[RMDB]
RNA sequence: GGGAACGACUCGAGUAGAGUCGAAAAGGCACACAGUUGUUAGAAACAAGUGCUUGGUGCCGUAAAGAAAAACUAGCACUUAGAAGAUUUCUCAGGAAGGCACAUUUACUUCUGCAGAAAGGUGCUGCCUGCGUCCGACCGACCGAUCGUAAGAGCAGUUACUUAACGGGUUCGCCCGUUAAGUAACAAAAGAAACAACAACAACAAC
Reactivity to 2A3 in 0.01 (KOAc 150mM, MgCl2 10mM, bicine 150mM(pH8.5), 24C), signal-to-noise 2, nucleotides 027 to 156: g020g000c000a030c000a000c050a060g000u040u000g060u020u150a070g070a030a100a020c030a020a020g000u000g020c010u010u010g020g000u000g000c030c020g010u060a050a180a040g070a090a080a010a000a000c030u050a010g010c020a020c000u030u050a040g050a090a010g080a150u010u140u010c020u000c040a010g150g050a030a060g070g000c030a020c000a070u060u090u060a140c050u000u100c050u050g100c060a050g140a160a160a040g050g000u040g010c050u010g000c000c000u070g040c030g050u000c100c050g050a050c070c020g020a020c000c060g010a120u100c050g040u110a020a020g040a000g080c050a030
Reactivity to DMS in 0.01 (KOAc 150mM, MgCl2 10mM, bicine 150mM(pH8.5), 24C), signal-to-noise 1, nucleotides 027 to 156: g010g020c010a030c020a260c140a070g010u010u000g100u000u000a080g000a220a230a100c060a050a030g020u000g050c010u020u000g000g000u010g000c000c010g010u010a040a070a190g020a070a040a060a170a170c050u010a020g000c050a050c000u010u000a100g000a090a080g000a130u010u000u000c010u000c020a130g000g000a090a020g060g000c050a060c080a100u000u010u000a080c030u000u000c060u020g060c110a070g010a080a030a050g030g050u000g000c020u000g000c030c010u000g000c100g040u020c000c000g040a080c020c050g030a080c060c020g000a040u010c020g000u000a060a060g010a050g000c020a120